[RMDB]
RNA sequence: GGGAACGACUCGAGUAGAGUCGAAAAGUGGUUUCGACCACAAGUGGGCGUACUACUAGCGGACCCAACAGCCGUCGCUACCCACCAGUCUCCCAAAUAGGAGACUGAGGCGACGGACAUGGGUUGCUAGUAUCGCAGAAUUGAGUUUCGACUCAAACGCUAUGGUGUUAUUCGUAACACCAUAGCGAAAAGAAACAACAACAACAAC
Reactivity to DMS in 0.01 (KOAc 150mM, MgCl2 10mM, bicine 150mM(pH8.5), 24C), signal-to-noise 1, nucleotides 027 to 156: g040u000g020g010u000u000u000c180g030a060c000c000a010c060a040a060g080u010g040g000g000c060g060u000a090c180u000a010c000u010a030g030c040g030g030a090c000c010c000a030a040c100a160g000c010c000g000u030c010g010c010u000a060c000c020c020a300c160c000a010g020u000c000u010c000c000c010a050a160a120u000a090g020g010a020g040a040c000u000g010a030g080g000c000g000a030c020g000g120a000c000a120u040g000g060g120u000u000g010c000u000a000g010u000a000u000c040g000c040a130g000a060a190u000u020g000a150g030u000u010u000c160g010a200c030u000c050a060a060a200
Reactivity to 2A3 in 0.01 (KOAc 150mM, MgCl2 10mM, bicine 150mM(pH8.5), 24C), signal-to-noise 3, nucleotides 027 to 156: g010u030g040g040u020u080u210c210g110a040c000c000a040c020a030a080g110u270g040g080g000c060g030u170a100c080u010a010c000u000a020g000c080g050g050a030c000c030c000a030a030c080a040g080c000c000g020u020c000g000c000u050a100c060c070c000a020c010c000a010g000u020c000u050c000c060c050a230a220a070u300a130g010g010a000g000a000c000u000g000a000g000g000c000g000a000c000g000g000a010c010a060u020g000g020g010u010u040g000c000u010a000g000u000a030u210c000g000c020a000g100a090a060u060u050g000a030g030u070u050u180c240g080a050c010u000c070a060a040a060